[RMDB]
RNA sequence: GGGAACGACUCGAGUAGAGUCGAAAAGUCACUCAAUUCGUUGAGUGACAUACUGGGCCCGGAGUCGCCCAUGAAAGGGUCAAGACGCGCUCGAUAAAAUAACUAGUUGCCAGUUCGCUGGCAACAAUCUUAUUGCCCCAUUCGUGGGGCAAUAAGAAAAAGAAACAACAACAACAAC
Reactivity to DMS in 0.01 (KOAc 150mM, MgCl2 10mM, bicine 150mM(pH8.5), 24C), signal-to-noise 1, nucleotides 027 to 126: g030u000c010a010c000u000c010a020a020u000u010c180g000u000u000g000a020g020u000g000a010c000a030u040a040c150u010g000g010g000c000c010c030g000g010a050g030u000c120g020c000c010c030a100u010g000a050a050a090g030g010g000u020c080a090a120g000a070c100g000c180g000c030u000c000g000a090u010a030a050a100a080u000a000a120c190u000a110g010u020u000g010c010c000a000g010u000u020c230g020c000u010g010g010c000a000a010c010a080a040
Reactivity to 2A3 in 0.01 (KOAc 150mM, MgCl2 10mM, bicine 150mM(pH8.5), 24C), signal-to-noise 1, nucleotides 027 to 126: g030u010c010a010c000u010c010a000a030u090u110c150g040u060u000g030a000g010u010g000a000c000a000u010a010c000u020g020g000g020c070c000c040g000g000a010g020u060c040g010c070c000c000a010u160g140a120a090a070g060g000g000u000c030a000a010g110a030c010g030c050g000c040u000c000g090a050u140a160a230a000a030u130a090a040c090u070a070g000u030u000g010c010c010a000g040u080u060c240g080c110u010g000g010c000a000a000c010a020a030
The record gives the reactivity of an RNA of 177 nucleotides to DMS and 2A3.
It was measured as part of the RMDB library M2PK50.
The DMS profile rests on 802 reads.